[RMDB]
RNA sequence: GGGAACGACUCGAGUAGAGUCGAAAAACAAUGGAACAAUAAAUAUCAAGCAUGUGCCCGGCAUCGACAUGGUUAUCCAGACACUACCAAUGGAUGUCCCACUCGCACGUCAGAUAAAGGCAUACAGCGUAUGCCACCGAUUCGUCGGUGGCAUACGAAAAGAAACAACAACAACAAC
Reactivity to DMS in 0.01 (KOAc 150mM, MgCl2 10mM, bicine 150mM(pH8.5), 24C), signal-to-noise 4, nucleotides 027 to 126: a070c090a110a050u000g000g000a100a100c120a090a070u000a040a110a060u000a080u000c090a060a090g030c090a070u000g020u000g010c020c060c100g000g010c070a040u000c030g010a070c080a050u000g030g010u000u000a080u010c040c040a090g010a070c160a060c120u000a040c080c030a040a090u020g000g000a050u000g010u010c020c010c020a140c130u010c110g000c050a020c060g010u010c040a070g010a060u020a020a100a110g000g010c070a070u000a030c120a090g000
Reactivity to 2A3 in 0.01 (KOAc 150mM, MgCl2 10mM, bicine 150mM(pH8.5), 24C), signal-to-noise 3, nucleotides 027 to 126: a000c050a040a110u140g050g050a120a000c040a130a080u220a160a090a040u230a070u110c040a030a020g090c020a040u070g000u030g060c050c040c000g030g000c010a020u020c030g060a040c010a060u060g010g070u090u110a020u110c050c010a030g040a100c070a080c120u160a050c000c060a050a080u040g010g010a000u030g050u070c010c010c010a090c020u080c010g030c040a040c040g060u020c050a020g000a020u100a070a080a010g030g080c020a020u050a110c020a060g000
The record gives the reactivity of an RNA of 177 nucleotides to DMS and 2A3. The RNA was probed in 150 mM KOAc, 10 mM MgCl2 and 150 mM bicine (pH 8.5) at 24 C.